Structure probing data (DMS and 2A3) for a 177-nucleotide construct. Values cover nucleotides 27 to 126. The reactions ran in a buffer of 150 mM KOAc, 10 mM MgCl2 and 150 mM bicine (pH 8.5), at 24 C.
RNA sequence: GGGAACGACUCGAGUAGAGUCGAAAAGAUAUGGACCGAUUGUUGACAUGAAUAAAUGUCGGAAACGACAUGAAUUCAACAGCAACACUGUCGGUCCUAAGUCAAAACAGCUUUGUUCGCAAAGCUGGAGUCUUACAGCGUUCGCGCUGUAAGACUCAAAAGAAACAACAACAACAAC
Reactivity to DMS in 0.01 (KOAc 150mM, MgCl2 10mM, bicine 150mM(pH8.5), 24C), signal-to-noise 2, nucleotides 027 to 126: g000a000u000a250u020g000g010a000c060c000g070a010u000u000g030u000u000g020a110c120a300u010g000a010a000u000a060a200a000u000g000u000c000g010g010a120a090a110c000g010a000c010a000u000g000a160a070u000u000c000a070a030c300a150g020c050a000a000c050a040c300u030g020u000c040g010g010u000c010c000u000a000a050g000u000c030a050a100a070a300c020a000g000c000u000u000u000g000u000u010c250g000c040a000a010a020g010c010u000g000
Reactivity to 2A3 in 0.01 (KOAc 150mM, MgCl2 10mM, bicine 150mM(pH8.5), 24C), signal-to-noise 2, nucleotides 027 to 126: g010a030u030a000u100g000g010a000c010c030g010a020u000u030g070u020u010g080a130c090a300u300g000a030a000u050a030a050a010u020g010u000c010g000g000a040a040a020c000g010a000c000a000u020g020a080a090u040u000c080a190a090c130a130g160c010a020a010c020a000c100u100g060u040c030g020g000u000c000c000u000a020a000g010u020c010a000a080a080a240c000a000g000c000u100u040u050g030u120u220c270g000c250a010a010a010g000c000u040g140